RNA sequence: GGGAACGACUCGAGUAGAGUCGAAAAAUGAGCUGGGCGGCCUCCCGCGUGACACUCUGCAUCUGCAGGAGAGCGUUCACGUACCCGUCCUGGGCACUUAGCGCAAAGAGCCGGGGGAUUAGCGUAAUAUCACAGCAGCAUUCGUGCUGCUGUGAUAAAAAGAAACAACAACAACAAC
Reactivity to DMS in 0.01 (KOAc 150mM, MgCl2 10mM, bicine 150mM(pH8.5), 24C), signal-to-noise 1, nucleotides 027 to 126: a050u040g020a080g000c030u030g000g000g010c080g080g000c110c090u000c040c000c070g000c000g000u020g000a050c060a040c040u000c000u050g030c000a190u040c300u060g000c000a040g040g040a050g000a000g000c040g000u030u030c000a000c070g000u020a110c190c020c000g030u000c000c050u000g000g010g020c060a080c030u000u000a120g010c090g000c120a020a100a080g000a110g030c020c000g000g010g030g020g030a050u020u000a050g000c050g020u010a020a210
Reactivity to 2A3 in 0.01 (KOAc 150mM, MgCl2 10mM, bicine 150mM(pH8.5), 24C), signal-to-noise 3, nucleotides 027 to 126: a000u240g020a010g010c020u000g000g040g000c010g030g000c010c000u040c000c020c000g000c000g000u020g020a010c000a000c040u020c010u010g000c090a270u090c200u290g000c030a040g020g170a070g040a000g070c050g070u110u060c030a010c020g020u100a090c000c000c000g010u040c000c030u040g030g020g040c050a040c100u140u160a060g060c030g020c140a080a110a030g060a010g000c040c000g000g040g000g000g000a070u090u110a020g020c010g010u050a110a050